Structure probing data (DMS and 2A3) for a 177-nucleotide construct. It was measured as part of the RMDB library TTRDEL. The RNA was probed in 150 mM KOAc, 10 mM MgCl2 and 150 mM bicine (pH 8.5) at 24 C. The DMS profile rests on 12,063 reads. For 2A3 the reverse transcriptase was SuperScript II with manganese. Values cover nucleotides 27 to 126.
RNA sequence: GGGAACGACUCGAGUAGAGUCGAAAAGAUAUGGACGAGCAGCCACAGACGUAUCGGAAACGAUACGUGAACUGUGGACCCUGCGAUGAGUCCUAAGUCAAAACGCGUGCUCUUCGGAGCACGCGAACAUUACGAUAACCUUCGGGUUAUCGUAAUGAAAAGAAACAACAACAACAAC
Reactivity to DMS in 0.01 (KOAc 150mM, MgCl2 10mM, bicine 150mM(pH8.5), 24C), signal-to-noise 7, nucleotides 027 to 126: g010a070u000a300u010g010g000a010c010g000a170g010c010a050g000c020c000a010c010a010g010a060c010g000u000a000u000c000g010g000a120a080a210c010g010a010u000a010c000g000u000g000a060a150c020u000g010u000g000g000a110c150c300c020u000g010c010g010a120u010g010a240g000u000c000c010u000a040a110g010u000c050a070a050a070a180c010g000c000g010u000g000c000u000c000u000u010c180g020g000a010g010c000a000c000g020c000g010a010a050
Reactivity to 2A3 in 0.01 (KOAc 150mM, MgCl2 10mM, bicine 150mM(pH8.5), 24C), signal-to-noise 5, nucleotides 027 to 126: g030a040u110a080u170g000g000a010c020g030a030g030c010a010g080c010c000a010c010a020g040a030c010g010u010a010u010c010g020g030a060a070a030c010g000a000u000a010c000g000u010g030a060a060c010u000g000u020g020g000a010c070c010c010u010g010c030g190a240u240g150a050g000u000c000c000u010a150a020g090u060c060a040a040a060a120c020g010c010g000u010g010c000u010c000u050u120c300g120g000a000g000c000a000c000g010c000g000a000a000